[RMDB]
The data come from the RNA Mapping Database (RMDB), library OK2TRN. Structure probing data (2A3 and DMS) for a 177-nucleotide construct. The reactions ran in a buffer of 150 mM KOAc, 10 mM MgCl2 and 150 mM bicine (pH 8.5), at 24 C. The 2A3 profile rests on 2,151 reads. 2A3 adducts were read by reverse transcription with SuperScript II with manganese.
RNA sequence: GGGAACGACUCGAGUAGAGUCGAAAACAAUCUGUAUCCGGUCGGUGUCCGACGCACGCGCGGACUCGUCGCGCGAGUUCCUCGCGUCACGCUGCGCCGAGUUGCUCAUCGUCCACGAGCCUACGACGUAGGUUAGCUUCUUCGGAAGCUAACCUACAAAAGAAACAACAACAACAAC
Reactivity to 2A3 in 0.01 (KOAc 150mM, MgCl2 10mM, bicine 150mM(pH8.5), 24C), signal-to-noise 1, nucleotides 027 to 126: c030a000a150u090c040u160g090u170a110u070c060c050g060g060u000c030g000g000u000g000u020c040c040g020a030c000g030c020a030c030g000c000g020c020g000g050a070c070u030c060g060u020c020g010c030g000c030g040a020g000u170u080c050c030u010c010g010c000g000u010c010a030c030g000c040u020g000c020g000c000c000g010a030g030u030u080g010c000u000c030a050u040c030g050u020c000c010a040c050g030a000g040c020c040u030a040c040g170a020c070
Reactivity to DMS in 0.01 (KOAc 150mM, MgCl2 10mM, bicine 150mM(pH8.5), 24C), signal-to-noise 2, nucleotides 027 to 126: c080a100a100u000c060u010g020u010a090u010c030c060g000g000u000c010g040g020u000g000u000c110c020g000a030c050g000c230a180c160g000c000g030c100g000g000a120c060u010c040g020u010c240g010c120g000c010g010a070g000u010u000c050c030u000c020g000c010g010u000c170a060c030g020c020u000g000c040g010c010c040g000a100g010u000u000g040c070u000c090a090u000c080g000u000c070c030a100c070g000a060g010c020c000u000a090c070g030a110c190